[RMDB]
RNA sequence: GGGAACGACUCGAGUAGAGUCGAAAAUAACUUGAAUAUGAUCGAUUUAAGUCGCAGUAUUGGUAUUAUUCUUGAUAAUGCAAUUGAGGCAUCAACUGAAAUUGAUGACCCUAUCAUUCGCGUUGCAGGAGCAUCAUUAGUUCGCUAAUGAUGCUCCAAAAGAAACAACAACAACAAC
Reactivity to 2A3 in 0.01 (KOAc 150mM, MgCl2 10mM, bicine 150mM(pH8.5), 24C), signal-to-noise 2, nucleotides 027 to 126: u000a000a070c000u000u100g090a020a010u100a110u200g120a100u040c020g030a000u000u240u240a100a030g050u010c010g000c090a010g020u070a020u050u030g090g030u030a090u190u000a090u040u020c030u020u030g070a080u030a200a020u030g000c010a040a050u050u110g010a090g030g000c000a010u000c000a050a040c010u180g080a100a040a030u010u000g000a010u020g110a200c010c000c020u060a090u300c050a100u170u190c120g000c000g050u010u040g010c060a040
Reactivity to DMS in 0.01 (KOAc 150mM, MgCl2 10mM, bicine 150mM(pH8.5), 24C), signal-to-noise 2, nucleotides 027 to 126: u020a060a090c070u010u010g010a020a030u000a060u010g000a170u020c050g000a010u000u000u000a070a190g000u010c060g020c070a130g010u000a040u010u010g000g050u000a030u000u010a060u010u000c040u000u010g010a060u010a030a020u000g000c010a040a040u000u000g000a060g000g020c000a020u000c010a010a020c090u000g090a030a120a180u000u010g000a000u000g010a060c040c000c070u010a020u000c040a070u000u000c060g020c060g040u000u020g010c100a120